Structure probing data (DMS) for a 177-nucleotide construct.
RNA sequence: GGGAACGACUCGAGUAGAGUCGAAAAAGAUAUGGAUCCUGGGCUAAUCCGUAUUGUCAGCUCGUGAGGGAUCGGAAACGAUCCCUCCGAGCUUGGAUUUAUACGGACAACCCAGGAUCCUAAGUCAGAAGUUGAUAAGGUUCGCCUUAUCAACUUCAAAAGAAACAACAACAACAAC
Reactivity to DMS in 0.01 (KOAc 150mM, MgCl2 10mM, bicine 150mM(pH8.5), 24C), signal-to-noise 2, nucleotides 027 to 126: a090g020a030u010a300u000g000g000a010u000c010c000u000g000g020g030c010u010a220a300u010c000c000g000u000a010u000u000g000u010c010a020g000c010u000c020g000u020g000a000g010g000g020a010u000c000g010g010a050a080a160c020g010a010u000c000c000c010u000c000c010g000a010g000c000u000u010g010g010a040u010u000u000a010u000a010c000g000g000a010c160a190a190c000c000c000a010g000g000a000u000c000c000u000a010a070g000u000c080a180
DMS adducts were read by reverse transcription with MarathonRT. It was measured as part of the RMDB library TTRDES. The RNA was probed in 150 mM KOAc, 10 mM MgCl2 and 150 mM bicine (pH 8.5) at 24 C.